An RNA of 177 nucleotides, treated with 2A3 and DMS and read out base by base. As a SHAPE reagent, 2A3 marks flexible, mostly unpaired nucleotides at the ribose 2'-OH. For DMS the reverse transcriptase was MarathonRT.
RNA sequence: GGGAACGACUCGAGUAGAGUCGAAAACAUGGUAUACUAGUGGUACCGCUAGUACUAGGAUCGUACGUACUGCAGUAGACUCGAUCGAUCCGUACUGACAUGAUAGCACAUGACGUCUAGGAGGAUCGGGAUUGUUCCGUUUCGACGGAACAAUCCCAAAAGAAACAACAACAACAAC
Reactivity to 2A3 in 0.01 (KOAc 150mM, MgCl2 10mM, bicine 150mM(pH8.5), 24C), signal-to-noise 2, nucleotides 027 to 126: c030a070u130g040g000u080a030u010a170c020u030a080g010u030g080g150u050a070c050c070g000c080u040a010g020u070a060c060u030a060g100g000a040u100c030g020u090a070c030g010u010a010c060u020g030c030a040g030u140a040g070a140c040u020c060g100a150u050c060g010a030u030c020c000g040u090a030c010u010g040a010c000a050u020g030a050u100a110g070c050a020c030a260u060g030a070c070g030u000c040u050a010g060g030a020g050g050a040u040c000
Reactivity to DMS in 0.01 (KOAc 150mM, MgCl2 10mM, bicine 150mM(pH8.5), 24C), signal-to-noise 2, nucleotides 027 to 126: c110a080u000g010g050u000a050u010a010c040u000a080g040u000g020g000u000a080c120c110g010c090u020a040g020u010a020c070u020a110g020g010a090u000c050g010u000a140c060g000u000a030c030u010g000c060a110g050u010a070g000a130c040u020c040g020a130u010c010g000a000u000c000c000g010u000a210c070u000g030a060c000a040u000g010a100u000a160g010c110a110c040a010u000g010a060c140g020u000c010u000a060g010g000a180g000g000a060u000c060

Values are in units of 0.01, from 0 to 300, in steps of 10. The RNA was probed in 150 mM KOAc, 10 mM MgCl2 and 150 mM bicine (pH 8.5) at 24 C. Reactivities are given for positions 27 through 126.